[RMDB]
RNA sequence: GGGAACGACUCGAGUAGAGUCGAAAACGGUCUUGCUUCAGCUUAUAGGGCGAAUUCCUUUGAUGUACCUACAUUCUGCGCAAACCGUUCUGCAAUGUGUAAUUGGUGCUUGAUUAGCCAAGAUUCCGUGUAAUCCUAGCUUCGGCUAGGAUUACACAAAAGAAACAACAACAACAAC
Reactivity to 2A3 in 0.01 (KOAc 150mM, MgCl2 10mM, bicine 150mM(pH8.5), 24C), signal-to-noise 2, nucleotides 027 to 126: c010g030g010u010c090u110u040g020c000u160u160c000a010g010c000u000u080a050u020a040g000g030g050c040g050a090a100u150u200c060c000u070u040u240g090a070u090g030u190a300c000c000u000a000c000a010u030u030c000u010g030c010g020c000a000a020a010c000c000g000u020u000c010u030g020c000a080a140u090g050u100g040u260a060a190u060u020g000g050u030g040c060u120u080g130a220u040u200a010g010c000c000a000a000g050a100u120u000c060c040
Reactivity to DMS in 0.01 (KOAc 150mM, MgCl2 10mM, bicine 150mM(pH8.5), 24C), signal-to-noise 2, nucleotides 027 to 126: c010g010g000u000c170u000u000g020c030u020u020c010a030g040c050u000u000a050u010a020g000g010g000c130g000a070a170u000u000c180c220u010u030u010g020a110u010g040u000a070c030c010u000a070c020a000u000u010c000u010g070c300g000c020a000a040a000c010c000g000u000u000c050u010g050c100a070a010u010g020u010g010u010a060a010u010u000g010g020u000g000c100u010u020g000a130u010u000a080g000c010c000a060a070g010a050u000u000c030c110

Chemical mapping of a 177-nucleotide RNA with 2A3 and DMS. Conditions: 150 mM KOAc, 10 mM MgCl2 and 150 mM bicine (pH 8.5), 24 C.